This 177-nucleotide RNA was probed chemically with 2A3 and DMS. The reactions ran in a buffer of 150 mM KOAc, 10 mM MgCl2 and 150 mM bicine (pH 8.5), at 24 C.

[RMDB]
RNA sequence: GGGAACGACUCGAGUAGAGUCGAAAAUUAAGAUCGGGGACCAGGAAUUUGACCAUUUGCCGGCCCUGCUGGAGUUUUACAAGAUCCACUACCUGGACACCACCACCCUCAUCGAGCCUGCGCCCAGGUUUGUUCAAAGAUUCGUCUUUGAACAAACAAAAGAAACAACAACAACAAC
Reactivity to 2A3 in 0.01 (KOAc 150mM, MgCl2 10mM, bicine 150mM(pH8.5), 24C), signal-to-noise 1, nucleotides 027 to 126: u120u060a100a070g050a110u100c040g020g060g000g030a050c030c020a020g020g070a120a130u120u060u200g050a050c020c000a050u030u040u030g030c000c000g010g040c000c010c040u020g010c030u030g060g040a100g030u100u130u190u160a070c030a040a080g050a070u000c020c000a020c060u030a100c010c030u030g060g010a060c010a030c020c010a000c020c010a010c010c000c010u030c010a070u030c000g010a030g040c020c010u050g000c040g000c020c000c010a000g090
Reactivity to DMS in 0.01 (KOAc 150mM, MgCl2 10mM, bicine 150mM(pH8.5), 24C), signal-to-noise 3, nucleotides 027 to 126: u010u010a100a080g000a110u000c050g010g030g020g010a110c020c050a050g000g010a120a090u010u010u020g020a130c100c060a100u010u000u000g030c100c000g010g000c020c060c040u000g020c030u010g010g000a110g010u000u000u010u010a090c130a090a090g000a080u010c020c040a070c090u000a070c050c050u000g020g000a070c060a060c030c010a100c080c020a080c060c000c030u000c050a050u000c040g000a110g010c030c020u010g000c230g000c010c000c020a090g000